[RMDB]
RNA sequence: GGGAACGACUCGAGUAGAGUCGAAAAGUAACAACCGUUCAGUAUGAUCCCGCAGCACUAUCGUUCUUAUUGAACGCUCGUGUUGACUGGGAUUUCGGUAAUGGCGAUAGUGCGAACCUUGUCAUUAAUGACUUUCUGUUUCGCACCUUUGCACCUAUCUAAUGUUCUAGUUCGCUAGAACAUUAGAAAAAGAAACAACAACAACAAC
Reactivity to 2A3 in 0.01 (KOAc 150mM, MgCl2 10mM, bicine 150mM(pH8.5), 24C), signal-to-noise 9, nucleotides 027 to 156: g080u080a080a050c050a040a030c030c020g060u140u140c120a120g070u150a220u260g040a010u010c000c010c000g000c000a000g000c000a000c000u010a010u020c000g010u010u000c030u120u280a300u140u300g000a000a000c000g000c010u010c010g010u010g000u010u010g090a170c100u140g000g000g000a000u020u010u010c000g000g020u080a130a120u130g080g000c010g010a020u030a040g010u000g000c000g000a000a010c010c000u030u070g010u000c010a060u050u300a180a250u210g000a010c000u050u160u070c110u110g050u040u050u030c000g000c000a010c000c010u020u030u060g020c030a060c020c010u050a080
Reactivity to DMS in 0.01 (KOAc 150mM, MgCl2 10mM, bicine 150mM(pH8.5), 24C), signal-to-noise 5, nucleotides 027 to 156: g010u000a110a100c050a080a070c010c010g030u000u000c040a130g000u010a090u000g010a040u000c000c000c010g020c020a020g010c000a000c010u000a040u000c000g020u000u000c010u010u000a200u000u010g010a010a010c000g020c060u000c180g010u000g020u000u000g010a070c040u000g090g020g000a030u000u000u000c010g020g020u010a040a050u000g010g020c010g010a130u000a030g010u000g010c000g010a010a020c040c110u000u000g010u000c010a110u000u000a140a150u010g000a020c010u000u010u010c080u010g010u000u000u000c010g020c000a010c010c020u000u000u000g010c010a150c010c020u000a190